[RMDB]
RNA sequence: GGGAACGACUCGAGUAGAGUCGAAAAGAUAUGGACUUAGCCACAGGUCGAUGAAACAGUUCGGAAACGAACUGUGGAGACCGUGGAACUACUAAGUCCUAAGUCAAAACCAAGGUUCGCCUUGGAAGUAUGGCAAAGUGUUCGCACUUUGCCAUACAAAAGAAACAACAACAACAAC
Reactivity to 2A3 in 0.01 (KOAc 150mM, MgCl2 10mM, bicine 150mM(pH8.5), 24C), signal-to-noise 2, nucleotides 027 to 126: g020a030u060a060u180g000g010a000c010u030u010a010g000c000c050a010c170a210g070g000u030c040g250a300u050g020a050a000a010c000a000g000u010u000c030g000g090a040a090a060c000g000a000a000c000u010g000u000g000g000a020g000a010c000c000g000u010g000g000a040a040c060u220a020c000u010a150a010g000u050c010c010u020a050a040g020u000c000a000a000a180a220c000c000a000a020g000g000u060u110c280g130c060c000u000u000g000g000a000a020
Reactivity to DMS in 0.01 (KOAc 150mM, MgCl2 10mM, bicine 150mM(pH8.5), 24C), signal-to-noise 2, nucleotides 027 to 126: g000a040u010a300u000g000g000a000c000u000u000a000g030c000c000a000c000a170g020g000u000c000g010a070u040g030a280a210a030c000a010g040u000u000c010g000g000a050a120a210c000g040a030a010c010u000g000u000g000g000a130g000a000c000c040g020u000g010g000a010a030c050u000a300c000u000a010a000g010u010c000c010u000a030a070g000u010c060a070a090a160a090c010c000a010a000g020g000u000u000c300g030c000c000u000u010g000g010a080a080

Chemical mapping of a 177-nucleotide RNA with 2A3 and DMS. Reactivities are given for positions 27 through 126. For DMS, 1,094 sequencing reads were counted.